[RMDB]
RNA sequence: GGGAACGACUCGAGUAGAGUCGAAAAAAACGCUUGCGAACAGUCUUUGCCCUCUUCUUUCCCAACAGAAGAUGAGUAAAUGGAAUGGGAAUACGCAUGUACUGCUUUAGCAGACAUUUGUAGCAAAUCAGUCAUGAUAGUUCGCUAUCAUGACUGAAAAAGAAACAACAACAACAAC
Reactivity to DMS in 0.01 (KOAc 150mM, MgCl2 10mM, bicine 150mM(pH8.5), 24C), signal-to-noise 3, nucleotides 027 to 126: a080a070a060c160g030c120u010u000g020c040g010a070a050c040a050g010u010c040u000u000u010g010c030c000c000u000c020u000u000c020u010u000u010c010c010c020a060a090c240a020g020a030a020g010a050u010g000a110g030u010a040a060a080u030g010g010a070a070u000g010g010g010a110a090u000a030c060g010c100a020u000g000u000a100c000u000g000c000u000u010u010a120g030c010a000g000a060c010a020u000u000u000g010u000a040g010c120a060a070a130
Reactivity to 2A3 in 0.01 (KOAc 150mM, MgCl2 10mM, bicine 150mM(pH8.5), 24C), signal-to-noise 3, nucleotides 027 to 126: a000a020a030c090g000c050u070u130g020c030g030a050a020c040a060g020u000c020u060u050u100g010c000c000c000u050c020u020u000c010u060u060u040c000c000c000a030a030c030a010g050a050a020g020a030u170g040a060g090u150a020a110a110u160g040g040a140a050u030g000g060g000a040a040u070a010c030g020c010a010u020g000u080a300c020u010g060c000u130u210u260a050g010c000a000g010a020c000a000u060u040u080g010u030a020g030c050a010a000a150